An RNA of 207 nucleotides, treated with 2A3 and read out base by base. The 2A3 profile rests on 434 reads. The RNA was probed in 150 mM KOAc, 10 mM MgCl2 and 150 mM bicine (pH 8.5) at 24 C. For 2A3 the reverse transcriptase was SuperScript II with manganese.

[RMDB]
RNA sequence: GGGAACGACUCGAGUAGAGUCGAAAAUGACAUCCAAACAGAAAAGAUCACUCUUGCCAAACGCCAUGCUGAAAUUUGUGAUCACCACCAUGGUGCAGCACACACAUCUGAUGUCGACACCAUCAUGACCGGAUGCAUCUUAGGCAAUGAAUUGACAAACACACACCAGGUUCGCCUGGUGUGUGUUAAAAGAAACAACAACAACAAC
Reactivity to 2A3 in 0.01 (KOAc 150mM, MgCl2 10mM, bicine 150mM(pH8.5), 24C), signal-to-noise 1, nucleotides 027 to 156: u080g040a000c040a090u050c020c040a000a070a030c040a090g260a070a080a120a000g150a070u060c000a070c030u070c090u060u000g000c000c000a130a040a030c100g080c060c000a070u130g010c000u050g120a080a110a280u030u170u050g100u070g090a130u030c060a000c060c000a000c040c160a040u220g070g000u010g000c030a020g070c000a000c040a000c000a000c000a150u000c010u110g090a120u020g000u130c090g010a020c010a030c090c000a000u070c000a010u240g000a020c050c050g040g000a000u050g000c000a030u000c010u000u160a010g000g040c000a040a010u210g150a000a020u200u170g000a110c120a040